Notes:
Structure probing data (2A3 and DMS) for a 207-nucleotide construct. 2A3 adducts were read by reverse transcription with SuperScript II with manganese. The reactions ran in a buffer of 150 mM KOAc, 10 mM MgCl2 and 150 mM bicine (pH 8.5), at 24 C.
RNA sequence: GGGAACGACUCGAGUAGAGUCGAAAAUACGUCAAGUAACGGCCUCUAAGUUUAUAAUCUGAAGAUUAUGACGAUGAGAAAAUAACGCGCAGAAGUGCGCUGCUUUGAUACUUAUGGUACCAACAUUUAAAAGUGAAAAUUGUGCAGGAAGGAUCAGCACCAGUAAGCAGUUCGCUGCUUACUGGUGAAAAGAAACAACAACAACAAC
Reactivity to 2A3 in 0.01 (KOAc 150mM, MgCl2 10mM, bicine 150mM(pH8.5), 24C), signal-to-noise 2, nucleotides 027 to 156: u120a030c020g000u010c090a080a040g050u030a130a040c020g010g010c010c020u000c020u030a120a040g010u020u050u070a030u030a040a050u000c020u090g300a200a070g000a170u000u000a010u040g000a000c010g030a030u120g010a000g000a040a010a000a030u200a050a020c070g030c010g000c000a010g070a270a020g240u030g000c000g000c010u020g030c020u030u100u150g010a020u030a060c010u030u060a030u190g010g020u010a020c000c010a020a030c050a030u040u140u190a080a070a040a010g080u070g050a050a020a030a080u140u100g070u090g040c070a030g050g000a060a030g010g010a020u130c040a000g010
Reactivity to DMS in 0.01 (KOAc 150mM, MgCl2 10mM, bicine 150mM(pH8.5), 24C), signal-to-noise 2, nucleotides 027 to 156: u000a000c040g010u020c030a130a100g040u000a090a090c050g010g010c090c010u000c000u000a090a280g020u000u010u000a040u000a040a040u000c010u040g010a150a300g020a030u000u010a010u010g010a010c020g030a280u000g010a110g000a110a110a070a060u010a050a080c080g010c000g020c020a060g000a160a100g020u010g050c000g050c010u000g010c020u010u000u000g020a050u000a000c040u010u010a060u050g030g010u020a030c020c030a060a060c140a090u000u000u010a050a050a080a080g040u010g000a070a070a080a120u010u020g010u000g040c020a110g010g010a050a020g010g000a030u020c110a120g000